[RMDB]
RNA sequence: GGGAACGACUCGAGUAGAGUCGAAAAGUUUUUGUAUCUCAUACUUGAGAAGAGGAUACAAACCAGGCCAAGCAUCUUUGUUUCGAAGUUAUUUGACCUCAUGCAUCAACAACUCAAGAGAAACAGGACUGCCUGUAGAGUUCGCUCUACAGGCAGUAAAAGAAACAACAACAACAAC
Reactivity to DMS in 0.01 (KOAc 150mM, MgCl2 10mM, bicine 150mM(pH8.5), 24C), signal-to-noise 1, nucleotides 027 to 126: g070u000u000u070u000u060g000u000a060u000c000u050c000a050u000a240c100u000u000g010a220g030a110a110g010a220g000g010a000u000a070c000a000a040a200c270c210a080g000g070c000c000a060a060g060c010a020u010c000u010u000u080g000u010u010u040c130g000a050a040g000u010u000a080u000u030u000g000a000c010c030u000c130a090u000g000c000a000u000c000a020a030c030a150a160c050u000c020a030a050g000a050g060a010a000a000c210a020g000g000
Reactivity to 2A3 in 0.01 (KOAc 150mM, MgCl2 10mM, bicine 150mM(pH8.5), 24C), signal-to-noise 4, nucleotides 027 to 126: g040u010u050u040u050u050g010u050a020u000c040u000c050a070u140a230c020u040u070g040a010g030a140a050g060a100g070g020a000u010a020c000a000a050a010c020c020a060g040g000c010c010a000a020g020c000a060u020c040u000u100u180g090u130u100u130c150g070a060a010g010u030u060a080u040u060u060g070a080c020c030u080c080a050u130g080c000a020u060c030a040a090c010a020a050c040u020c060a080a010g030a020g020a020a060a050c060a060g000g140
The record gives the reactivity of an RNA of 177 nucleotides to DMS and 2A3. Source: RMDB library OK1LIB, as collected in RNAgym. The reactions ran in a buffer of 150 mM KOAc, 10 mM MgCl2 and 150 mM bicine (pH 8.5), at 24 C.